[RMDB]
RNA sequence: GGGAACGACUCGAGUAGAGUCGAAAAGCAAAGAGUCAAAAAAAUAGAGAGCUUUGCGAGACCUACCAAGGGUGAAGAGAUACCAUCCAAGGAGCUGAAGAGAAAUCUCACUUUAGAAGCCUGGGGAAAAAGACCCUUUCGUUCGCGAAAGGGUCAACACAUCAUAGUUGUUCGCAACUAUGAUGUGAAAAGAAACAACAACAACAAC
Reactivity to 2A3 in 0.01 (KOAc 150mM, MgCl2 10mM, bicine 150mM(pH8.5), 24C), signal-to-noise 1, nucleotides 027 to 156: g030c000a020a050a000g030a030g050u040c010a230a140a100a080a000a000a000u300a060g080a010g010a020g030c000u000u000u030g000c010g000a010g010a050c000c000u000a040c070c060a080a130g020g000g010u090g090a080a070g040a000g010a070u050a090c000c000a010u030c000c000a030a060g040g000a030g050c040u040g020a050a030g010a060g100a120a060a100u010c020u020c070a060c060u090u120u070a080g000a170a020g020c020c010u040g050g030g040g010a000a060a040a040a010g000a040c000c000c000u000u000u000c020g000u030u040c260g000c000g100a010a000a010g000g000g010u000c000a000a000